[RMDB]
RNA sequence: GGGAACGACUCGAGUAGAGUCGAAAAAGCCAUACCAUUACGAUGGUAUGGCAAGUCCGUGACGGCGAUGGAUCCCGCCUGGCCGAUGCCGAACUGCCCAUCUGGCUGAUGGUUCCUGCCCCGUCAAAAAACGUAAAGCACUUCGGUGCUUUACGAACUACUAAUGCGUCUUCGGACGCAUUAGUAGAAAAGAAACAACAACAACAAC
Reactivity to DMS in 0.01 (KOAc 150mM, MgCl2 10mM, bicine 150mM(pH8.5), 24C), signal-to-noise 1, nucleotides 027 to 156: a090g020c010c000a030u000a000c010c000a040u000u010a110c290g050a150u020g010g020u000a000u010g000g020c010a000a000g010u010c010c020g090u000g010a030c040g020g030c040g020a100u000g030g010a100u000c040c020c020g040c040c040u000g010g020c000c020g000a090u000g000c040c010g000a080a160c100u000g010c060c020c010a060u000c020u010g040g030c020u000g010a130u000g020g010u000u000c000c000u010g000c020c050c020c010g040u010c020a030a020a080a110a090a110c010g020u000a010a000a000g000c000a010c000u000u000c300g020g060u000g030c020u000u000u010a000c000g000a010a100
Reactivity to 2A3 in 0.01 (KOAc 150mM, MgCl2 10mM, bicine 150mM(pH8.5), 24C), signal-to-noise 4, nucleotides 027 to 156: a000g000c000c000a000u000a000c000c000a010u030u060a060c300g130a030u010g000g000u000a000u010g000g000c000a000a010g020u000c010c010g020u050g000a010c010g000g040c110g040a020u060g020g010a020u080c030c060c000g070c060c070u030g030g000c010c010g020a010u030g000c050c050g120a190a100c110u220g040c060c010c000a020u020c090u160g010g010c010u030g050a070u110g020g010u000u020c010c000u050g040c000c010c000c030g010u010c020a000a030a030a060a000a040c000g000u000a000a010a000g000c000a000c010u030u120c260g060g000u010g000c000u000u000u000a000c000g000a010a000